[RMDB]
RNA sequence: GGGAACGACUCGAGUAGAGUCGAAAAAGUGCUGGGAUUACAGGCGUGAGCCACCCGCGCAAGGCGGAUAGUGUGGUUCUUGCGAUCUGGGAACUUACAAGUUACCGGAAGAGAGGGAGAGGCACACCAACCAGAGGAGAUUCGUCUCCUCUGGUUGAAAAGAAACAACAACAACAAC
Reactivity to 2A3 in 0.01 (KOAc 150mM, MgCl2 10mM, bicine 150mM(pH8.5), 24C), signal-to-noise 2, nucleotides 027 to 126: a020g050u060g030c040u060g040g000g020a120u100u170a090c030a090g080g000c040g030u010g010a000g000c010c000a030c020c000c000g000c000g030c100a170a060g300g010c040g010g090a080u120a230g180u150g020u030g140g200u030u010c000u060u080g080c010g030a030u000c010u010g030g000g010a010a020c010u060u080a040c130a090a070g020u000u010a100c020c020g040g020a100a050g090a010g010a050g040g050g000a060g000a020g050g030c010a000c010a010c060
Reactivity to DMS in 0.01 (KOAc 150mM, MgCl2 10mM, bicine 150mM(pH8.5), 24C), signal-to-noise 4, nucleotides 027 to 126: a100g000u000g020c030u020g020g010g000a150u010u000a100c140a090g000g010c040g030u020g000a070g020c010c010a070c030c010c010g010c010g000c140a090a090g000g010c040g010g000a130u010a110g010u010g030u000g020g010u000u000c010u000u000g010c020g010a130u010c010u000g010g000g010a020a020c020u010u010a130c300a130a080g000u000u000a050c020c010g000g000a080a110g000a130g020a110g000g010g000a080g010a120g010g020c030a020c030a090c170
Record summary
An RNA of 177 nucleotides, treated with 2A3 and DMS and read out base by base. The 2A3 profile rests on 2,584 reads. DMS adducts were read by reverse transcription with MarathonRT. The reactions ran in a buffer of 150 mM KOAc, 10 mM MgCl2 and 150 mM bicine (pH 8.5), at 24 C.